This 177-nucleotide RNA was probed chemically with 2A3 and DMS.

RNA sequence: GGGAACGACUCGAGUAGAGUCGAAAAGAGCUGAUCGCUCAGGGUUUCGACCGCGUGAUGUUCACCGGUGGCACCGAGAUCGGCCGCAAGGUCUACGAAGGCGCCGCGCCGCACCUGACCCCGGUCAGCAUCAUUCACAAUUCGUUGUGAAUGAUGCAAAAGAAACAACAACAACAAC
Reactivity to 2A3 in 0.01 (KOAc 150mM, MgCl2 10mM, bicine 150mM(pH8.5), 24C), signal-to-noise 6, nucleotides 027 to 126: g060a000g010c040u060g030a100u090c060g010c070u060c050a030g070g040g000u020u040u170c070g060a060c020c020g010c080g030u050g060a140u130g100u170u140c030a040c050c020g000g020u060g040g020c030a020c060c020g010a010g010a170u100c070g020g010c010c000g000c030a070a060g030g010u000c020u030a050c070g090a100a040g030g010c020g000c010c000g010c050g010c010c020g020c020a060c000c010u040g050a050c000c010c020c000g010g040u050c030a000
Reactivity to DMS in 0.01 (KOAc 150mM, MgCl2 10mM, bicine 150mM(pH8.5), 24C), signal-to-noise 4, nucleotides 027 to 126: g000a100g040c010u000g000a070u000c090g030c060u030c080a160g000g000g000u000u000u020c020g000a070c020c020g000c170g000u000g020a120u020g000u010u010c010a060c060c040g010g010u010g000g010c180a040c020c030g000a130g000a110u000c130g010g020c020c010g010c120a050a090g000g000u000c020u000a050c080g000a300a090g000g000c040g000c010c050g000c050g030c010c030g000c140a050c010c010u000g000a100c110c030c120c000g000g030u030c070a100
Values cover nucleotides 27 to 126. In probing experiments dimethyl sulfate is read out at A N1 and C N3, which are open when not base-paired. The reactions ran in a buffer of 150 mM KOAc, 10 mM MgCl2 and 150 mM bicine (pH 8.5), at 24 C.